[RMDB]
RNA sequence: GGGAACGACUCGAGUAGAGUCGAAAAUGUCAAUUUGUUAGAUGAUCAGAGGGGAAAAGAAGAGCUAGAGCAAUGGUUACGGAAUGGUAGCAAUACCAUAUCGUGAUCUCUAAUGAGCGUCCUCAUACUCACUACAUUGGUUCGCCAAUGUAGUGAGAAAAGAAACAACAACAACAAC
Reactivity to 2A3 in 0.01 (KOAc 150mM, MgCl2 10mM, bicine 150mM(pH8.5), 24C), signal-to-noise 1, nucleotides 027 to 126: u120g010u000c030a080a130u060u000u030g040u100u100a060g030a140u110g010a060u070c040a010g030a120g000g030g020g000a000a110a000a100g120a090a000g010a030g040c030u110a000g020a000g070c030a120a130u180g000g000u020u030a010c010g010g000a000a000u000g000g010u010a010g000c030a020a040u000a040c000c000a000u000a020u000c000g000u000g000a030u040c020u060c020u040a070a060u100g080a020g000c010g030u000c000c010u000c030a000u100a040
Reactivity to DMS in 0.01 (KOAc 150mM, MgCl2 10mM, bicine 150mM(pH8.5), 24C), signal-to-noise 2, nucleotides 027 to 126: u010g000u000c090a120a130u000u010u000g000u000u000a100g000a030u010g000a050u000c090a060g010a120g030g010g000g000a020a040a050a080g000a090a060g000a090g000c050u020a060g010a100g000c250a050a050u000g010g000u000u000a010c000g020g020a070a000u000g020g000u000a000g000c300a090a160u000a000c000c000a000u000a030u000c000g010u000g000a020u000c000u010c100u000a030a120u000g010a040g010c050g000u000c020c020u000c060a120u000a140
An RNA of 177 nucleotides, treated with 2A3 and DMS and read out base by base. Values cover nucleotides 27 to 126. Conditions: 150 mM KOAc, 10 mM MgCl2 and 150 mM bicine (pH 8.5), 24 C.